Structure probing data (DMS and 2A3) for a 207-nucleotide construct.
The 2A3 profile rests on 2,542 reads.
For DMS the reverse transcriptase was MarathonRT.
The data come from the RNA Mapping Database (RMDB), library OK3TST.
RNA sequence: GGGAACGACUCGAGUAGAGUCGAAAAAGGCCUUUGCCUGAUUGACUGCUAGCCAUGAUGGGUCUCCUUACGGUUUCAGAACGACCUUGAUGCAUCCGUCCUGCUUGUCGCGGAACGUCUUGUAGAGAGCAGGCCCAUCUUCCAGCGUGCCGCGAUGGCAUAACGACCUUUUCGAAGGUCGUUAUGCAAAAGAAACAACAACAACAAC
Reactivity to DMS in 0.01 (KOAc 150mM, MgCl2 10mM, bicine 150mM(pH8.5), 24C), signal-to-noise 2, nucleotides 027 to 156: a040g000g030c000c120u010u000u020g020c000c000u000g010a160u000u010g020a100c040u000g020c090u000a050g010c000c030a060u000g010a090u010g020g060g030u000c000u000c030c040u010u000a110c090g010g010u010u000u000c040a110g000a110a140c120g000a040c030c010u000u000g020a250u010g000c030a070u000c030c010g020u010c010c050u000g000c050u010u000g060u000c140g050c020g010g000a010a010c020g020u000c050u000u010g030u000a090g000a240g000a100g000c060a070g000g000c040c000c010a030u000c030u010u000c100c020a120g030c030g040u000g000c000c000g000c040g000a100u000g020
Reactivity to 2A3 in 0.01 (KOAc 150mM, MgCl2 10mM, bicine 150mM(pH8.5), 24C), signal-to-noise 4, nucleotides 027 to 156: a010g050g000c060c020u140u110u260g020c040c020u070g010a100u060u090g080a130c050u070g060c070u090a040g040c060c020a120u140g010a030u070g030g000g000u000c000u030c020c030u040u050a080c090g020g070u040u040u080c050a110g030a180a060c040g020a060c030c030u030u070g040a050u060g030c040a030u050c030c040g040u030c030c020u070g060c050u090u160g020u070c040g000c010g000g020a010a010c000g100u080c050u050u120g020u070a010g040a010g000a010g140c090a040g010g060c030c000c000a000u010c000u020u010c020c010a030g010c010g040u020g040c010c020g040c020g030a040u070g060